An RNA of 177 nucleotides, treated with DMS and 2A3 and read out base by base.
DMS adducts were read by reverse transcription with MarathonRT.
Values cover nucleotides 27 to 126.
Source: RMDB library OK2TRN, as collected in RNAgym.
Conditions: 150 mM KOAc, 10 mM MgCl2 and 150 mM bicine (pH 8.5), 24 C.
The DMS profile rests on 1,648 reads.
[RMDB]
RNA sequence: GGGAACGACUCGAGUAGAGUCGAAAAUGGAAUGACACAGCAUUUCUAACACUCUCGCUGUAUACGAGCAAAAUGCCGAUCACAGCCGCUGACGUGCUCAAUGACCGCGUAUUGCCGUUCAACAACCGUUAAGCUUCAGGUUCGCCUGAAGCUUAACAAAAGAAACAACAACAACAAC
Reactivity to DMS in 0.01 (KOAc 150mM, MgCl2 10mM, bicine 150mM(pH8.5), 24C), signal-to-noise 2, nucleotides 027 to 126: u010g010g000a050a040u010g000a070c080a050c180a130g030c030a020u000u000u000c020u010a110a110c150a080c090u000c010u010c080g010c050u010g020u010a070u010a050c020g000a160g030c110a040a040a030a040u000g000c090c020g000a030u020c060a030c110a030g050c010c040g010c230u010g010a060c150g010u030g000c040u000c040a060a060u000g000a080c010c050g010c050g010u000a080u010u000g000c010c000g000u010u010c110a110a060c140a050a060c130c190
Reactivity to 2A3 in 0.01 (KOAc 150mM, MgCl2 10mM, bicine 150mM(pH8.5), 24C), signal-to-noise 3, nucleotides 027 to 126: u090g010g000a040a010u040g070a040c020a000c020a140g050c000a050u020u050u010c040u050a110a030c050a040c080u080c010u000c060g020c040u020g050u070a080u030a060c070g000a060g120c020a010a070a050a070u080g000c040c030g030a040u010c000a060c060a040g000c000c040g090c140u180g090a100c100g080u220g040c010u000c000a030a050u040g030a020c000c010g010c000g010u030a060u000u070g010c000c000g060u090u060c040a080a090c040a080a030c030c030